[RMDB]
This 177-nucleotide RNA was probed chemically with DMS and 2A3. It was measured as part of the RMDB library OK2TRN. The reactions ran in a buffer of 150 mM KOAc, 10 mM MgCl2 and 150 mM bicine (pH 8.5), at 24 C. The 2A3 profile rests on 4,919 reads. DMS adducts were read by reverse transcription with MarathonRT.

RNA sequence: GGGAACGACUCGAGUAGAGUCGAAAAAAGGAAUGAUGGCACACCCAUGAUAUCUUGAAGUGCUAUCAAAACAGUAAAUAAGUAUUUAAGUCAUGGGAAUAAAAAUAAGCAAAAUAUGCAUGGAAAAACGAUAAUUUAGUUUCGACUAAAUUAUCGUAAAAGAAACAACAACAACAAC
Reactivity to DMS in 0.01 (KOAc 150mM, MgCl2 10mM, bicine 150mM(pH8.5), 24C), signal-to-noise 4, nucleotides 027 to 126: a060a050g010g020a130a150u000g000a000u000g010g000c010a020c020a140c010c010c000a020u010g020a050u000a070u010c090u010u000g000a090a130g010u000g010c000u000a020u000c000a030a060a090a130c100a120g010u020a040a090a100u010a090a090g010u000a080u000u020u020a080a080g000u000c010a010u000g000g000g000a210a090u010a010a050a060a090a100u010a050a070g020c020a040a040a090a120u020a060u000g010c070a110u000g020g000a050a050a060a080
Reactivity to 2A3 in 0.01 (KOAc 150mM, MgCl2 10mM, bicine 150mM(pH8.5), 24C), signal-to-noise 4, nucleotides 027 to 126: a000a020g120g020a100a050u070g000a000u010g020g000c010a010c000a060c010c000c000a010u020g010a000u040a030u080c050u050u090g080a240a030g020u000g000c000u000a000u020c000a000a110a000a040c050a020g090u160a040a030a170u170a190a050g070u070a190u120u170u070a090a010g000u000c000a010u000g000g000g050a020a010u160a020a050a020a000a000u180a050a040g000c020a050a030a140a070u210a130u180g010c020a050u060g070g130a050a030a130a010